[RMDB]
RNA sequence: GGGAACGACUCGAGUAGAGUCGAAAAGCGGUAACCGGUGAUCAGAGCGCCCGAGCCGGUGCGAACGAAGUCCAGGUGGAAUGUCUCCGCGGGUGGGCCGGACGCCAGCCACACCGCCACCGCGGGCCAUUCGUAUCCCCUUCGGGGGAUACGAAUGAAAAGAAACAACAACAACAAC
Reactivity to DMS in 0.01 (KOAc 150mM, MgCl2 10mM, bicine 150mM(pH8.5), 24C), signal-to-noise 3, nucleotides 027 to 126: g020c000g020g010u030a080a120c130c010g000g000u030g000a100u040c070a130g010a170g060c070g000c020c030c010g000a130g020c030c010g000g000u000g000c060g020a080a170c070g010a050a070g000u010c010c010a220g000g020u030g040g000a120a070u020g000u040c030u000c020c000g000c010g010g000g030u010g000g020g000c100c030g000g000a110c080g030c020c000a130g000c020c140a060c080a040c040c070g010c080c120a100c010c000g010c020g000g020g010c100
Reactivity to 2A3 in 0.01 (KOAc 150mM, MgCl2 10mM, bicine 150mM(pH8.5), 24C), signal-to-noise 3, nucleotides 027 to 126: g040c010g000g030u020a080a040c020c000g030g020u040g010a090u110c030a020g050a050g120c050g040c050c030c010g020a040g010c000c000g070g030u030g010c070g000a070a070c030g020a100a000g020u040c030c000a050g110g000u060g070g100a130a060u080g070u040c050u030c080c010g010c050g000g020g110u230g010g040g000c030c000g000g020a030c060g030c010c020a020g070c050c000a070c000a010c030c010g000c010c020a000c000c010g000c020g010g010g010c010
The record gives the reactivity of an RNA of 177 nucleotides to DMS and 2A3. For 2A3 the reverse transcriptase was SuperScript II with manganese. The reactions ran in a buffer of 150 mM KOAc, 10 mM MgCl2 and 150 mM bicine (pH 8.5), at 24 C. 2A3 is a SHAPE reagent: it acylates the 2'-hydroxyl of flexible nucleotides of all four kinds. Source: RMDB library OK1LIB, as collected in RNAgym. For DMS, 3,693 sequencing reads were counted.